[RMDB]
RNA sequence: GGGAACGACUCGAGUAGAGUCGAAAAGUUAAAACAGCCUGCUGGGAAGUGGCCAGACAGGUCCCUGGGAGCAGCGCCCAGAAGGUGGGGAACCUGUGGGGUCUGGCUCUGGUUUGCUGCUGUCCCAUAAGACUAUAUUUUUCGAAAUAUAGUCUUAAAAAGAAACAACAACAACAAC
Reactivity to DMS in 0.01 (KOAc 150mM, MgCl2 10mM, bicine 150mM(pH8.5), 24C), signal-to-noise 7, nucleotides 027 to 126: g000u010u010a060a070a100a140c060a080g010c010c070u000g010c060u010g000g010g010a160a110g010u010g000g000c010c000a030g010a080c020a020g000g000u000c010c010c010u010g000g010g010a080g010c060a090g000c070g010c230c000c020a080g000a090a130g000g020u000g010g000g000g010a120a080c020c010u010g010u000g020g010g010g010u000c010u010g000g010c110u000c010u000g010g010u000u000u010g010c020u000g000c040u000g000u000c000c000c010a150
Reactivity to 2A3 in 0.01 (KOAc 150mM, MgCl2 10mM, bicine 150mM(pH8.5), 24C), signal-to-noise 3, nucleotides 027 to 126: g020u030u050a060a100a060a030c000a000g030c020c020u080g010c030u050g030g020g040a120a160g090u110g100g040c010c010a000g030a100c010a010g000g040u040c020c000c000u010g020g010g000a040g050c050a020g060c030g070c010c010c020a050g090a100a060g080g070u110g010g110g010g020a030a080c010c010u080g050u110g090g040g000g000u010c010u030g060g010c010u010c010u000g020g000u050u130u150g000c000u000g000c010u040g080u050c000c000c000a030

The data come from the RNA Mapping Database (RMDB), library OK2TRN. Structure probing data (DMS and 2A3) for a 177-nucleotide construct. For 2A3 the reverse transcriptase was SuperScript II with manganese. For DMS, 12,495 sequencing reads were counted.